[RMDB]
RNA sequence: GGGAACGACUCGAGUAGAGUCGAAAAGACUACGUAGAAGGCUGUAUCUGACUUCGAGAGCUCUAUUCUUCCUGUAGCGCCAACCAGGGAAUAGUUGGCAAGUCAGGAAUACUUGGCACGUAGAGAAGAUAAUGUGUCAUUUCGAUGGUACAUUAUCAAAAGAAACAACAACAACAAC
Reactivity to DMS in 0.01 (KOAc 150mM, MgCl2 10mM, bicine 150mM(pH8.5), 24C), signal-to-noise 9, nucleotides 027 to 126: g010a170c010u000a010c010g010u000a090g010a100a040g000g010c090u010g010u020a060u030c040u010g000a030c010u000u000c090g010a140g020a150g010c030u000c030u010a030u010u010c040u030u030c010c000u000g000u010a140g010c160g000c050c060a060a050c280c030a060g000g020g000a040a040u010a040g010u010u010g000g000c040a020a040g000u010c000a000g000g000a060a030u010a030c050u010u010g000g010c120a060c020g010u000a010g000a170g010a120a100
Reactivity to 2A3 in 0.01 (KOAc 150mM, MgCl2 10mM, bicine 150mM(pH8.5), 24C), signal-to-noise 9, nucleotides 027 to 126: g020a020c000u000a000c010g020u040a030g040a190a020g160g020c030u020g010u040a050u010c020u010g010a010c000u010u020c050g040a040g020a020g060c010u000c010u020a020u030u010c020u120u090c010c000u010g020u040a050g080c070g050c110c020a040a070c030c010a030g050g000g030a030a030u030a020g050u090u120g040g020c020a000a000g020u000c000a000g020g000a050a010u020a020c020u040u060g030g000c020a000c010g000u000a000g010a010g030a110a010